[RMDB]
RNA sequence: GGGAACGACUCGAGUAGAGUCGAAAAUUAAAUGAUGUAGUACGGCCGCCACUGAAGGACCGGUCCUCUCCGAAAGGAGAGUUGAGUAGAGUGUGAGCAGGACCGGGUGCUAGUCACUGGUGAAAAAGUAUUACAUUCGGUUCGCCGAAUGUAAUACAAAAGAAACAACAACAACAAC
Reactivity to 2A3 in 0.01 (KOAc 150mM, MgCl2 10mM, bicine 150mM(pH8.5), 24C), signal-to-noise 2, nucleotides 027 to 126: u120u050a040a060a090u110g030a050u080g040u100a030g020u030a070c040g030g000c020c020g000c020c010a040c030u100g030a070a040g020g030a030c020c030g000g050u030c010c000u000c000u000c010c020g100a080a010a030g030g020a020g010a000g020u020u020g030a050g010u050a020g050a110g030u050g020u040g050a060g020c050a070g000g040a010c030c000g040g040g000u040g010c000u030a020g030u010c000a010c070u030g010g020u080g080a190a020a010a020a020
Reactivity to DMS in 0.01 (KOAc 150mM, MgCl2 10mM, bicine 150mM(pH8.5), 24C), signal-to-noise 3, nucleotides 027 to 126: u000u000a100a080a100u010g010a050u000g010u000a060g020u000a060c040g010g000c040c010g010c030c010a070c060u000g020a120a110g010g010a100c030c010g000g000u010c050c000u000c000u000c010c000g000a070a080a150g000g000a010g010a010g010u010u000g020a080g030u000a090g000a090g020u000g020u010g010a090g030c030a100g000g010a050c030c010g020g000g000u000g020c010u000a080g000u000c030a060c070u000g000g010u000g020a040a050a070a100a090